The data come from the RNA Mapping Database (RMDB), library OK2TST.
The record gives the reactivity of an RNA of 177 nucleotides to 2A3 and DMS.
Conditions: 150 mM KOAc, 10 mM MgCl2 and 150 mM bicine (pH 8.5), 24 C.
For 2A3 the reverse transcriptase was SuperScript II with manganese.
For DMS, 683 sequencing reads were counted.
[RMDB]
RNA sequence: GGGAACGACUCGAGUAGAGUCGAAAAUGCAUACGCUAGACGAGGGGAUGAUUCACAUCCUGAGCAGGAUGGAGUGGGAUGGCAUGAGAUUUCCUCAAGUUAUUCAGAACAGCAUGCCAUUUAAAAACGGAACUGACGAUUUCGAUCGUCAGUUCCGAAAAGAAACAACAACAACAAC
Reactivity to 2A3 in 0.01 (KOAc 150mM, MgCl2 10mM, bicine 150mM(pH8.5), 24C), signal-to-noise 1, nucleotides 027 to 126: u070g000c050a130u120a270c000g000c020u050a050g040a140c010g030a050g050g000g010g000a010u030g030a050u100u070c050a040c000a220u000c000c000u060g150a160g020c150a000g000g090a010u050g020g000a040g090u130g000g200g000a020u050g000g020c050a020u000g030a060g030a090u060u060u010c010c000u020c000a030a030g030u050u030a080u110u160c100a040g000a100a050c030a020g000c000a000u000g030c000c000a070u000u070u140a080a080a000a020a020
Reactivity to DMS in 0.01 (KOAc 150mM, MgCl2 10mM, bicine 150mM(pH8.5), 24C), signal-to-noise 1, nucleotides 027 to 126: u020g040c120a100u000a140c080g020c060u000a040g000a040c000g040a300g000g020g010g010a040u000g000a150u030u000c070a160c010a040u000c000c000u000g000a190g040c250a100g000g010a010u020g000g010a040g010u060g000g000g000a010u000g000g000c000a010u000g010a040g000a180u010u000u000c010c000u000c080a020a290g000u000u000a080u010u040c150a100g000a100a080c150a180g020c000a000u000g000c030c010a010u010u000u000a000a000a060a140a130